[RMDB]
RNA sequence: GGGAACGACUCGAGUAGAGUCGAAAAGAUAUGGAUACGAAGGUUGUACACUUCGACGAUCUCGGAAACGAGGGAGAAGUGUCAAUGUUGACGUAUCCUAAGUCAAAUCGUCACUUCGGUGACGAAACUUUGCCUAUCCGUUCGCGGAUAGGCAAAGAAAAGAAACAACAACAACAAC
Reactivity to 2A3 in 0.01 (KOAc 150mM, MgCl2 10mM, bicine 150mM(pH8.5), 24C), signal-to-noise 2, nucleotides 027 to 126: g050a020u090a020u170g020g000a010u000a010c000g070a110a000g110g020u000u020g080u080a010c000a000c010u050u000c040g290a300c020g010a050u040c020u000c000g040g000a140a160a080c000g010a020g000g000g000a030g010a010a000g020u020g000u020c010a000a040u130g190u060u080g180a050c030g000u000a000u000c010c000u010a110a000g040u020c050a010a020a230u070c000g000u000c010a000c000u110u110c300g130g000u000g000a000c000g010a000a000a000
Reactivity to DMS in 0.01 (KOAc 150mM, MgCl2 10mM, bicine 150mM(pH8.5), 24C), signal-to-noise 2, nucleotides 027 to 126: g000a020u000a300u000g000g000a020u010a000c000g020a300a100g000g020u000u000g010u030a010c010a030c000u000u000c000g010a070c300g010a000u000c000u000c000g000g000a110a120a210c020g000a010g010g000g000a000g000a020a000g010u000g000u010c010a000a000u000g000u010u000g010a260c070g010u010a000u000c000c000u000a000a150g000u000c050a050a090a090u010c000g000u000c000a000c000u010u000c160g040g060u000g000a000c000g000a030a060a070
Conditions: 150 mM KOAc, 10 mM MgCl2 and 150 mM bicine (pH 8.5), 24 C. This 177-nucleotide RNA was probed chemically with 2A3 and DMS. 2A3 adducts were read by reverse transcription with SuperScript II with manganese. DMS adducts were read by reverse transcription with MarathonRT.